[RMDB]
RNA sequence: GGGAACGACUCGAGUAGAGUCGAAAAUUAUAUAGCGUGUGCAAGACGCUGAACUUGCCAUGAACUGGAACUUUAGUGCUGAGGUCCGAGUUCCAGAUCAUCAUUUCGGACCUCAGCACUAAUAUAACAACAAUUCCGGAUUCGUCCGGAAUUGUUGAAAAGAAACAACAACAACAAC
Reactivity to DMS in 0.01 (KOAc 150mM, MgCl2 10mM, bicine 150mM(pH8.5), 24C), signal-to-noise 1, nucleotides 027 to 126: u000u010a130u020a170u030a090g030c020g040u000g000u000g030c040a000a030g000a090c090g030c160u010g010a100a050c010u000u000g000c010c040a020u010g010a100a130c090u000g010g050a110a110c170u000u000u000a000g000u000g010c020u020g020a010g010g010u010c000c000g000a040g000u010u010c050c040a100g020a040u010c150a070u010c110a070u000u010u000c000g020g000a060c000c020u000c010a000g010c000a000c000u000a000a010u000a070u000a060a160
Source information: This 177-nucleotide RNA was probed chemically with DMS. The DMS profile rests on 793 reads. The RNA was probed in 150 mM KOAc, 10 mM MgCl2 and 150 mM bicine (pH 8.5) at 24 C. Source: RMDB library M2PK90, as collected in RNAgym.